[RMDB]
RNA sequence: GGGAACGACUCGAGUAGAGUCGAAAAUCAAUCAUGUUCGCAUGAUUGAAAAGGUCAGCUGACCAAACCACGACACGCGUCGAAGCGACCGAGCCCGGAGGCAAAGUGCAAUCUUCGGAUUGCACAAGCAAAAUAACGGUUUCGACCGUUAUUUUGCAAAAGAAACAACAACAACAAC
Reactivity to 2A3 in 0.01 (KOAc 150mM, MgCl2 10mM, bicine 150mM(pH8.5), 24C), signal-to-noise 1, nucleotides 027 to 126: u020c010a000a000u000c000a010u010g010u010u000c150g030c140a020u000g000a020u000u010g020a030a070a020a010g040g000u020c020a060g030c080u090g030a030c040c000a130a040a000c090c040a090c040g100a010c000a020c090g150c060g030u010c010g040a080a030g030c000g030a010c000c020g020a000g040c020c000c000g000g100a060g010g020c030a150a050a000g010u000g000c000a000a000u010c010u050u070c170g090g010a000u000u000g010c000a000c000a000a000
Reactivity to DMS in 0.01 (KOAc 150mM, MgCl2 10mM, bicine 150mM(pH8.5), 24C), signal-to-noise 2, nucleotides 027 to 126: u010c000a000a020u000c000a030u000g010u000u020c230g050c010a010u000g000a010u000u010g010a040a000a150a080g000g000u000c000a100g020c070u000g000a070c020c070a060a110a150c120c100a080c070g000a030c080a070c130g000c170g020u000c010g000a170a100g000c000g030a070c010c000g000a120g000c000c010c020g020g000a080g020g000c150a070a090a130g000u000g000c000a000a000u000c000u010u000c120g000g010a030u000u000g020c000a000c000a040a070

About this RNA: The record gives the reactivity of an RNA of 177 nucleotides to 2A3 and DMS. The reactions ran in a buffer of 150 mM KOAc, 10 mM MgCl2 and 150 mM bicine (pH 8.5), at 24 C. Values cover nucleotides 27 to 126. DMS adducts were read by reverse transcription with MarathonRT.